RNA sequence: GGGAACGACUCGAGUAGAGUCGAAAAUUUUUUGCUAUCCAACUGCUAUUCCCAUUUCUAAACCUUGUUACACGAGCAUCUUGAUCAAUGGUCUAGAAAGGGAAAUAGCAGUUGAGUGGUGCCAGAGGUUUCACUUAUUCUUCGGAAUAAGUGAAACAAAAGAAACAACAACAACAAC
Reactivity to 2A3 in 0.01 (KOAc 150mM, MgCl2 10mM, bicine 150mM(pH8.5), 24C), signal-to-noise 2, nucleotides 027 to 126: u100u010u020u020u100u130g010c010u040a060u060c010c000a010a000c010u010g000c000u000a000u010u000c000c020c070a180u010u040u000c030u010a020a020a010c000c000u050u030g050u050u130a080c030a000c040g050a040g160c090a110u090c030u070u050g010a010u020c010a000a040u150g010g010u000c000u020a000g020a020a010a010g000g000g010a000a030a030u000a010g010c000a000g020u010u000g000a000g000u010g020g040u090g090c030c030a100g050a050g190
Reactivity to DMS in 0.01 (KOAc 150mM, MgCl2 10mM, bicine 150mM(pH8.5), 24C), signal-to-noise 2, nucleotides 027 to 126: u010u000u010u000u000u000g030c010u000a030u000c020c000a010a010c010u000g000c000u000a010u000u000c010c000c010a130u000u000u010c000u000a010a020a000c000c000u000u010g000u010u000a180c090a060c100g000a120g040c280a080u000c040u020u000g010a110u000c010a020a020u010g010g010u000c010u000a000g010a020a010a030g000g020g000a000a020a030u000a010g000c000a020g000u000u000g000a050g010u000g010g010u000g000c020c080a110g010a180g020
Description
An RNA of 177 nucleotides, treated with 2A3 and DMS and read out base by base. For DMS, 1,929 sequencing reads were counted. For 2A3, 2,295 sequencing reads were counted. The data come from the RNA Mapping Database (RMDB), library RFMREP. 2A3 adducts were read by reverse transcription with SuperScript II with manganese. For DMS the reverse transcriptase was MarathonRT.